The record gives the reactivity of an RNA of 207 nucleotides to 2A3.
It was measured as part of the RMDB library OK3TST.
Reactivities are given for positions 27 through 156.
RNA sequence: GGGAACGACUCGAGUAGAGUCGAAAAUCUGCUAUGCGCUGUGGUCGUAAACUUGACCUCCAAUGGGUAGAAGCUUCUCAUUUGGAAGCUAGUACAAAUACUAGUGACCCACUUAGUUACCAUAAGGCAUGGCAUUUAGUCUGUUCUGCCAAUGGUACCCCAUAGGCUAGUUCGCUAGCCUAUGGGGAAAAGAAACAACAACAACAAC
Reactivity to 2A3 in 0.01 (KOAc 150mM, MgCl2 10mM, bicine 150mM(pH8.5), 24C), signal-to-noise 2, nucleotides 027 to 156: u060c040u010g000c020u040a010u150g070c110g060c100u070g030u060g020g020u020c040g050u100a070a160a130c080u110u210g020a050c010c010u050c080c020a130a110u080g020g030g060u060a040g050a190a030g050c080u080u050c000u010c000a220u150u130u130g020g000a010a060g020c000u000a000g010u000a030c080a120a210a040u060a070c010u000a000g040u010g110a200c000c000c000a020c100u080u060a000g060u060u060a010c000c000a000u010a130a130g020g000c030a030u100g040g000c000a000u050u180u040a060g030u010c070u080g000u110u110c000u030g010c010c000a010a150u050g020g020u070a070